[RMDB]
RNA sequence: GGGAACGACUCGAGUAGAGUCGAAAACAGGUUCUUGUCGACGGGAGACUACUGUAAAUUGGAUUCUCAGUAGGAAAUCGAGCUUCUGCCAAGCUGUGUGGUAAACAAGGUUUUCGUGAAUCCUCAAAUCGUACCGGACUUUCGAGUCCGGUACGAUAAAAGAAACAACAACAACAAC
Reactivity to 2A3 in 0.01 (KOAc 150mM, MgCl2 10mM, bicine 150mM(pH8.5), 24C), signal-to-noise 3, nucleotides 027 to 126: c060a000g050g000u090u030c030u060u070g050u060c000g020a030c000g010g040g000a100g030a030c000u050a000c000u030g060u110a010a140a100u160u170g080g050a080u090u000c050u020c010a100g040u090a010g000g070a070a020a180u100c040g000a040g090c020u060u050c070u060g020c020c020a070a020g040c050u050g050u040g000u030g110g010u070a110a040a020c020a070a120g030g000u010u000u010u080c060g050u050g060a000a030u010c000c000u030c040a060a160
Reactivity to DMS in 0.01 (KOAc 150mM, MgCl2 10mM, bicine 150mM(pH8.5), 24C), signal-to-noise 2, nucleotides 027 to 126: c040a090g030g000u000u000c030u000u000g000u000c070g020a080c090g000g030g000a120g080a200c010u000a050c070u000g010u020a010a050a040u010u000g020g000a300u000u040c070u000c070a020g030u000a030g000g000a070a050a050u020c120g020a110g000c120u030u010c110u000g000c000c060a060a190g040c040u020g030u000g030u100g000g000u000a030a080a100c160a080a060g020g050u000u020u000u000c020g010u000g000a040a030u000c010c000u010c140a010a120
About this RNA:
Chemical mapping of a 177-nucleotide RNA with 2A3 and DMS. Source: RMDB library OK1LIB, as collected in RNAgym. The RNA was probed in 150 mM KOAc, 10 mM MgCl2 and 150 mM bicine (pH 8.5) at 24 C. DMS adducts were read by reverse transcription with MarathonRT.